The record gives the reactivity of an RNA of 207 nucleotides to DMS and 2A3. For 2A3 the reverse transcriptase was SuperScript II with manganese. The reactions ran in a buffer of 150 mM KOAc, 10 mM MgCl2 and 150 mM bicine (pH 8.5), at 24 C. The DMS profile rests on 2,774 reads.

RNA sequence: GGGAACGACUCGAGUAGAGUCGAAAAAAAACCAGAUAGUCCUGCACAAAACGCGAAAAAGCCUGCUGGCUGAGCAGCGGGUGAGGGAUGUAGGUGCUGGUCAGAAUGUUGCACUUUACUGCAAUCGGGGAACUAUGAUGCACGGCAGCGCGGAAGGGUUAUUCUGAUUCUUCGGAAUCAGAAUAACAAAAGAAACAACAACAACAAC
Reactivity to DMS in 0.01 (KOAc 150mM, MgCl2 10mM, bicine 150mM(pH8.5), 24C), signal-to-noise 1, nucleotides 027 to 156: a020a020a030a020c000c030a090g000a080u000a170g010u010c000c000u000g090c030a110c050a050a020a030a090c050g010c040g010a100a150a110a100a300g030c050c000u000g010c020u000g010g030c030u010g000a230g050c050a050g000c000g000g060g040u000g010a090g000g010g000a070u010g040u000a050g000g040u010g030c000u000g000g040u010c060a100g020a080a130u010g010u000u000g010c000a050c090u010u000u010a080c050u000g000c000a050a010u010c090g000g000g010g010a040a050c070u010a090u000g020a140u010g030c040a090c040g000g020c050a070g040c060g000c030g010g080a090a070g000g010
Reactivity to 2A3 in 0.01 (KOAc 150mM, MgCl2 10mM, bicine 150mM(pH8.5), 24C), signal-to-noise 3, nucleotides 027 to 156: a020a000a010a020c040c010a040g020a030u090a010g070u050c000c000u040g000c010a010c040a080a130a130a040c090g050c030g180a090a110a020a040a020g020c020c020u040g040c000u030g080g000c060u100g030a040g060c020a000g000c000g000g000g020u050g020a090g020g050g000a050u050g020u050a020g020g020u020g000c020u010g000g030u030c010a010g060a160a090u130g040u060u060g010c030a030c070u110u150u300a110c090u130g010c020a020a050u070c040g020g000g020g010a020a010c010u020a050u220g070a050u070g020c030a010c080g030g030c000a010g000c020g000c010g080g000a060a020g040g060